[RMDB]
RNA sequence: GGGAACGACUCGAGUAGAGUCGAAAACAGCACGUCGAAGUAGAUCGCAAAAUGCUGGUCGUUUCAUGCCAGUCGAAGCGAGUCAGCGAAACGCAUCCGCGAGUAAAAGAGACAUAGGGUACUACGCCCAGCGGGUAGUGUUCGCACUACCCGCUGGAAAAGAAACAACAACAACAAC
Reactivity to DMS in 0.01 (KOAc 150mM, MgCl2 10mM, bicine 150mM(pH8.5), 24C), signal-to-noise 1, nucleotides 027 to 126: c090a140g000c100a080c180g070u000c070g020a200a110g110u070a040g000a000u000c110g010c080a170a040a110a170u010g000c000u020g000g000u000c000g000u000u000u050c000a180u090g000c070c150a030g060u070c020g030a000a010g060c010g000a020g090u040c070a010g000c060g000a030a020a000c130g000c150a030u000c000c000g000c000g110a060g000u000a080a070a010a000g000a080g000a060c060a040u000a110g000g000g000u000a040c230u070a010c190g000c190
Reactivity to 2A3 in 0.01 (KOAc 150mM, MgCl2 10mM, bicine 150mM(pH8.5), 24C), signal-to-noise 2, nucleotides 027 to 126: c010a010g070c080a010c030g030u000c020g040a050a000g060u160a040g010a100u000c050g000c030a060a040a040a000u180g010c000u020g020g020u050c070g010u110u000u040c100a060u080g070c010c020a100g120u270c120g010a010a000g020c010g000a000g080u150c040a000g000c010g010a050a000a030c000g010c020a000u050c040c010g030c000g000a030g020u160a040a090a140a020g210a040g020a000c020a070u090a140g050g130g070u140a110c020u040a000c000g090c010
Conditions: 150 mM KOAc, 10 mM MgCl2 and 150 mM bicine (pH 8.5), 24 C. Structure probing data (DMS and 2A3) for a 177-nucleotide construct. The DMS profile rests on 824 reads. 2A3 adducts were read by reverse transcription with SuperScript II with manganese.